Structure probing data (2A3 and DMS) for a 177-nucleotide construct. Source: RMDB library 15KREP, as collected in RNAgym.
[RMDB]
RNA sequence: GGGAACGACUCGAGUAGAGUCGAAAAGGGAUUUUCUUCCUCGAGUUUCUUGAUGGUCUUCCUGGUCUUCCGGAGAUCUUUCUCGAGCUCCUCCGCCUUUUUCCUUGCUGUGAUCCAUUUCUCGAGGGAGUAAUAACAUCUUCGGAUGUUAUUACUCAAAAGAAACAACAACAACAAC
Reactivity to 2A3 in 0.01 (KOAc 150mM, MgCl2 10mM, bicine 150mM(pH8.5), 24C), signal-to-noise 2, nucleotides 027 to 126: g040g020g030a040u070u060u030u090c010u030u000c020c010u030c020g040a040g030u070u190u060c040u130u120g060a080u090g030g030u030c020u120u100c050c030u030g020g060u080c050u230u030c050c020g040g000a010g010a040u020c000u040u080u000c040u020c030g040a030g000c000u000c000c000u000c020c030g020c010c020u000u080u010u000u030c000c020u030u080g010c040u040g020u060g080a060u000c030c000a060u000u110u000c010u000c000g030a040g000g090
Reactivity to DMS in 0.01 (KOAc 150mM, MgCl2 10mM, bicine 150mM(pH8.5), 24C), signal-to-noise 2, nucleotides 027 to 126: g000g000g000a120u000u000u010u020c050u010u000c030c010u000c040g020a070g010u000u010u010c040u000u000g010a100u000g020g010u000c020u000u020c010c010u010g030g010u010c120u010u000c050c040g030g020a070g010a030u000c030u010u010u000c040u000c070g010a100g010c060u000c030c030u000c030c040g010c030c010u010u000u000u000u000c010c030u000u000g010c050u010g000u000g010a070u000c030c030a110u000u000u000c010u000c010g010a090g000g020

The DMS profile rests on 3,744 reads.